An RNA of 177 nucleotides, treated with DMS and 2A3 and read out base by base. Conditions: 150 mM KOAc, 10 mM MgCl2 and 150 mM bicine (pH 8.5), 24 C.

[RMDB]
RNA sequence: GGGAACGACUCGAGUAGAGUCGAAAAUACGGUCUGGACUCAUCCGGAAACUUGAAAGGAAGAACAAUGAGGUACGACGUGCAAGGUAAGAUCGAGGAGAUCCCGUUACAUCAAGUCUCACUGCACACCAAACCUUUUCUUUCGAGAAAAGGUUUGGAAAAGAAACAACAACAACAAC
Reactivity to DMS in 0.01 (KOAc 150mM, MgCl2 10mM, bicine 150mM(pH8.5), 24C), signal-to-noise 2, nucleotides 027 to 126: u000a090c100g010g010u010c020u000g000g000a170c080u020c090a040u010c030c060g000g000a040a130a070c120u010u000g010a040a070a130g010g010a100a070g010a030a070c200a060a040u000g030a060g030g000u000a080c070g000a070c160g050u000g000c060a060a050g020g000u000a120a080g010a090u000c040g010a050g000g000a250g010a100u000c010c000c020g000u000u000a120c110a100u020c090a070a150g010u000c020u000c080a050c040u000g010c080a080c170a200
Reactivity to 2A3 in 0.01 (KOAc 150mM, MgCl2 10mM, bicine 150mM(pH8.5), 24C), signal-to-noise 1, nucleotides 027 to 126: u040a010c010g040g070u050c010u060g010g040a030c010u060c080a020u010c040c030g000g030a050a070a010c040u030u060g150a170a140a050g110g000a010a100g030a110a000c030a050a070u080g010a010g030g010u070a040c000g030a010c080g020u000g040c000a060a060g000g040u070a050a020g000a020u030c020g010a000g080g030a010g030a040u050c000c010c040g070u080u110a070c050a100u070c010a060a030g020u010c040u030c030a020c030u080g000c020a020c000a000

For DMS the reverse transcriptase was MarathonRT.